RNA sequence: GGGAACGACUCGAGUAGAGUCGAAAAGGCAACUGGGUAAUUAUCAUUUGGUACGUCCAUAUGAUGGGGCGCAUUAUCAAAUGGGACCAUCGUCGUCCCAGAAACAGGUUCAGUUUCAGGCAAGUCUACAAAGCCGUCGUGAUUGACAUCUUGGGCCCCCCACGUAAUCAUUCGUGAUUACGUGGGGAAAAGAAACAACAACAACAAC
Reactivity to 2A3 in 0.01 (KOAc 150mM, MgCl2 10mM, bicine 150mM(pH8.5), 24C), signal-to-noise 2, nucleotides 027 to 156: g020g000c000a070a070c050u040g140g000g000u080a110a230u230u130a160u140c020a040u020u140u080g010g000u050a020c060g010u000c040c050a080u070a100u300g160a170u230g010g000g000g000c040g000c140a060u100u060a050u140c030a030a030a030u000g010g000g010a000c010c010a200u090c080g000u080c030g000u020c000c010c000a000g070a010a050a000c110a000g000g000u040u030c020a010g000u040u010u040c030a050g060g000c060a180a000g060u100c050u020a100c130a050a140a110g040c050c020g070u090c090g030u030g020a070u050u020g010a060c010a050u020c050u050u080g040g020g060c050c000